[RMDB]
RNA sequence: GGGAACGACUCGAGUAGAGUCGAAAAGAUAUGGAGGAAUCGUCAGCACCAAUGAUGUCGGAAACGAUUGAGGUGCGACGAGUUCCUCCUAAGUCAAAACGUCGCCAUCCUUCGGGAUGGCGACGAACACUACGCUAUAGUUCGCUAUAGCGUAGUGAAAAGAAACAACAACAACAAC
Reactivity to DMS in 0.01 (KOAc 150mM, MgCl2 10mM, bicine 150mM(pH8.5), 24C), signal-to-noise 4, nucleotides 027 to 126: g000a040u010a300u000g000g000a030g010g000a030a050u000c010g010u000c000a130g040c000a010c000c000a160a180u000g010a100u000g010u000c000g010g000a150a110a160c000g010a010u000u000g000a110g000g010u000g010c010g000a010c000g000a010g000u000u000c000c000u000c000c000u000a010a070g010u000c030a060a060a120a180c030g020u000c000g000c000c000a010u000c000c000u000u010c240g010g000g010a010u000g000g000c000g000a000c000g000a010a090
Reactivity to 2A3 in 0.01 (KOAc 150mM, MgCl2 10mM, bicine 150mM(pH8.5), 24C), signal-to-noise 4, nucleotides 027 to 126: g020a020u080a040u180g000g010a000g000g020a010a020u010c010g010u010c060a130g000c000a010c000c010a060a240u220g090a030u160g030u020c010g020g020a060a080a090c020g010a010u020u060g030a010g010g000u000g000c010g010a000c000g010a000g000u020u000c000c010u000c000c000u000a010a000g020u000c010a000a020a040a110c010g000u020c010g000c020c000a020u000c020c030u060u170c300g070g000g000a000u000g000g020c030g000a000c000g000a000a000

Conditions: 150 mM KOAc, 10 mM MgCl2 and 150 mM bicine (pH 8.5), 24 C. The record gives the reactivity of an RNA of 177 nucleotides to DMS and 2A3. As a SHAPE reagent, 2A3 marks flexible, mostly unpaired nucleotides at the ribose 2'-OH.